[RMDB]
RNA sequence: GGGAACGACUCGAGUAGAGUCGAAAAUACCUUUUACAUAUUGGCGGGAAUGCGUGGGAAUCGAACCCACCUAAGAGGCUCUUAACCCCUCAUACUAGUUUUGAAGACUAGAGGGCACACCGGCACCGACGCUGACCAGGUUCGCCUGGUCAGCGUCAAAAGAAACAACAACAACAAC
Reactivity to 2A3 in 0.01 (KOAc 150mM, MgCl2 10mM, bicine 150mM(pH8.5), 24C), signal-to-noise 1, nucleotides 027 to 126: u120a040c000c000u010u040u140u300a070c030a070u210a030u030u060g100g000c080g010g000g000a000a120u120g040c010g060u010g020g020g020a000a080u180c000g000a230a240c000c000c000a000c000c000u000a030a000g070a010g000g000c000u000c000u020u020a050a060c000c090c000c010u020c050a130u090a030c150u070a000g130u000u000u000u300g200a300a090g010a000c000u000a000g000a000g130g090g020c030a010c020a090c130c040g030g000c000a000c050c050